[RMDB]
RNA sequence: GGGAACGACUCGAGUAGAGUCGAAAAGGCGGAUAGGAACCAGGUCAUGUUUGUACGUGAUUUGGGCCGACAUCCCCGCCGAAAUAGUCCUGCGAAGAUCUAAGGUCGCUUCUGGAUGGAUUUGCCAUUGAGUAGGUUACUUCGGUAACCUACUCAAAAAAGAAACAACAACAACAAC
Reactivity to DMS in 0.01 (KOAc 150mM, MgCl2 10mM, bicine 150mM(pH8.5), 24C), signal-to-noise 5, nucleotides 027 to 126: g010g020c000g000g000a110u030a170g010g010a070a100c010c000a020g000g000u000c000a000u000g010u000u040u050g010u050a060c000g010u000g000a000u000u030u010g010g000g000c030c020g000a170c270a090u030c140c100c030c040g000c010c000g030a050a090a080u030a140g000u000c010c000u020g020c080g010a060a070g000a080u010c070u030a100a150g000g010u000c050g010c030u020u030c080u000g040g010a080u020g000g000a120u010u000u010g010c030c050a180
Reactivity to 2A3 in 0.01 (KOAc 150mM, MgCl2 10mM, bicine 150mM(pH8.5), 24C), signal-to-noise 2, nucleotides 027 to 126: g020g000c010g000g030a060u070a080g060g010a060a240c000c000a000g000g000u000c000a000u000g070u040u090u230g300u290a000c060g010u010g000a000u000u000u000g010g000g000c030c020g000a000c020a050u010c000c000c010c040g000c000c000g010a090a060a000u110a020g090u040c000c000u000g010c040g030a060a010g050a050u070c030u190a040a020g050g050u040c020g010c000u110u010c110u100g080g040a040u080g010g080a060u040u020u060g040c010c030a020

Description: Chemical mapping of a 177-nucleotide RNA with DMS and 2A3. The reactions ran in a buffer of 150 mM KOAc, 10 mM MgCl2 and 150 mM bicine (pH 8.5), at 24 C. The data come from the RNA Mapping Database (RMDB), libraries RFM100 and RFMREP. DMS adducts were read by reverse transcription with MarathonRT.